RNA sequence: GGGAACGACUCGAGUAGAGUCGAAAAGUUCGGAUGCUUGGAGAUCUUGGCUGCGUCCGGGGAGACACCAGAAGCACUGACAAUUGCGCCAAUGACGAGCUUGGCAAUGUCGUCAGCAUCUUCUGCGUUGGGAAGUCCCGCGAGGCACAUCAUGAUCAUGAAAACAUCAAUUCGUUGAUGUUUUCAUAAAAGAAACAACAACAACAAC
Reactivity to DMS in 0.01 (KOAc 150mM, MgCl2 10mM, bicine 150mM(pH8.5), 24C), signal-to-noise 5, nucleotides 027 to 156: g020u000u000c050g000g000a100u000g010c030u000u010g010g010a130g000a050u000c010u000u000g010g020c110u010g020c040g020u000c000c020g000g020g060g020a160g000a140c030a040c010c010a020g010a040a010g050c300a050c000u000g000a010c000a010a040u000u000g030c300g020c010c000a020a050u010g010a270c140g020a170g000c250u000u000g010g010c000a050a270u000g000u000c030g000u000c000a020g020c000a100u000c010u000u000c000u000g000c120g010u000u000g030g020g020a090a170g010u000c010c010c020g010c070g000a140g000g000c030a030c030a050u000c040a060u010g000a090u000c050
Reactivity to 2A3 in 0.01 (KOAc 150mM, MgCl2 10mM, bicine 150mM(pH8.5), 24C), signal-to-noise 9, nucleotides 027 to 156: g070u090u110c060g040g040a090u080g060c080u050u080g060g040a070g010a040u020c010u040u060g060g000c080u020g010c030g220u000c010c010g010g000g010g010a050g020a010c020a010c010c010a000g000a000a000g010c090a000c030u000g000a000c010a020a040u020u040g020c040g000c020c000a030a050u120g090a190c150g040a070g150c060u020u020g010g000c000a000a020u060g010u070c030g000u000c010a000g000c040a170u040c000u010u000c000u010g020c070g100u120u090g030g020g040a090a050g090u060c000c010c000g010c110g010a060g020g010c010a020c000a050u120c010a020u090g020a030u040c020